[RMDB]
RNA sequence: GGGAACGACUCGAGUAGAGUCGAAAAUUUUUUUUUGCUAUCGCCGACGACAGUGGCCUAUUAAUCUAUCAGAAGCUUCAGACGCUUCGGACCAAACAAACAAAAGGGGUUAGCAGAGAUAGAGAUACAACGAAAACCAAUUCGUUGGUUUUCGUUGAAAAGAAACAACAACAACAAC
Reactivity to DMS in 0.01 (KOAc 150mM, MgCl2 10mM, bicine 150mM(pH8.5), 24C), signal-to-noise 1, nucleotides 027 to 126: u000u000u000u000u020u000u000u020u000g000c040u000a020u040c030g010c080c000g010a090c180g010a160c120a050g030u000g010g000c040c010u000a070u000u070a100a070u000c130u000a120u000c050a150g030a000a070g000c000u000u000c300a170g050a200c270g000c000u000u000c010g010g000a070c040c020a040a120a150c100a110a170a110c190a030a050a190a120g030g000g000g070u000u000a010g000c000a000g000a010g010a080u000a040g000a070g000a050u010a080
An RNA of 177 nucleotides, treated with DMS and read out base by base. The RNA was probed in 150 mM KOAc, 10 mM MgCl2 and 150 mM bicine (pH 8.5) at 24 C.